[RMDB]
RNA sequence: GGGAACGACUCGAGUAGAGUCGAAAAGGCUACUCUUCUUUCCCUUCUCUCGUCUUCCUCGGUCAACCUCCUGAGUUCCUCUUCUUCCUCCCUGCUGAGGUUCUUUCCUCCCGCGGAGAGUUGCUUCAUCCGUCUAGCUUCGGCUAGACGAAAAGAAACAACAACAACAAC
Reactivity to 2A3 in 0.01 (KOAc 150mM, MgCl2 10mM, bicine 150mM(pH8.5), 24C), signal-to-noise 5, nucleotides 027 to 129: g080g000c030u080a020c020u040c010u060u000c010u020u040u040c010c040c000u050u040c050u020c010u010c010g070u000c020u100u020c030c000u040c020g000g000u030c020a040a080c040c010u030c010c020u010g020a020g070u030u030c000c000u020c000u020u020c000u070u020c040c010u020c000c000c010u050g000c060u070g020a040g020g070u060u030c030u020u030u030c020c010u020c000c020c010g020c030g030g010a030g000a000g030u020u040g030c040u050u040c000a060u060c050
Reactivity to DMS in 0.01 (KOAc 150mM, MgCl2 10mM, bicine 150mM(pH8.5), 24C), signal-to-noise 4, nucleotides 027 to 129: g010g010c060u000a050c050u000c000u020u020c000u010u010u000c020c010c010u000u000c000u020c000u000c030g020u000c050u000u000c040c020u040c050g000g000u020c080a070a110c020c060u000c030c040u060g000a120g060u080u000c040c010u010c040u000u030c050u040u000c040c030u030c010c010c000u040g020c040u000g020a100g030g030u000u000c000u040u000u030c000c000u000c020c000c070g050c140g040g000a090g000a090g000u040u030g000c040u010u020c050a150u030c120